[RMDB]
RNA sequence: GGGAACGACUCGAGUAGAGUCGAAAAGACUUAUGCAAACAUAGUCUACGAGCCCACUACUCCCAUUUCGUCAGCGCUGAUUGCAGUUGCAAAUUGGCUUGCCCCCACUAAUGCUUAUAUGCGCACUAUCGCACCAGCUUCGGCUGGUGCAAAAGAAACAACAACAACAAC
Reactivity to 2A3 in 0.01 (KOAc 150mM, MgCl2 10mM, bicine 150mM(pH8.5), 24C), signal-to-noise 3, nucleotides 027 to 129: g000a010c010u110u070a020u100g080c080a020a110a040c000a080u000a030g010u000c010u040a020c070g010a020g020c010c050c000a010c030u080a030c000u030c010c010c040a060u020u080u150c100g030u000c020a000g020c000g000c070u070g050a150u150u030g020c000a010g050u000u030g000c000a000a040a050u060u020g020g020c010u050u130g000c000c000c000c000c000a000c040u040a070a030u070g000c010u140u010a100u030a030u290g160c030g030c000a010c010u010a010u050c010
Reactivity to DMS in 0.01 (KOAc 150mM, MgCl2 10mM, bicine 150mM(pH8.5), 24C), signal-to-noise 5, nucleotides 027 to 129: g020a080c050u000u000a030u020g100c300a020a060a090c050a060u020a000g000u040c030u020a160c150g040a140g040c000c000c020a170c050u040a140c000u030c050c050c060a070u020u130u010c190g020u000c040a030g010c050g030c300u070g030a070u040u000g160c020a070g000u020u090g000c030a020a000a080u030u000g020g050c060u000u030g020c000c000c000c000c000a090c130u000a030a140u080g010c060u020u040a080u040a080u090g050c100g010c030a020c050u040a030u060c020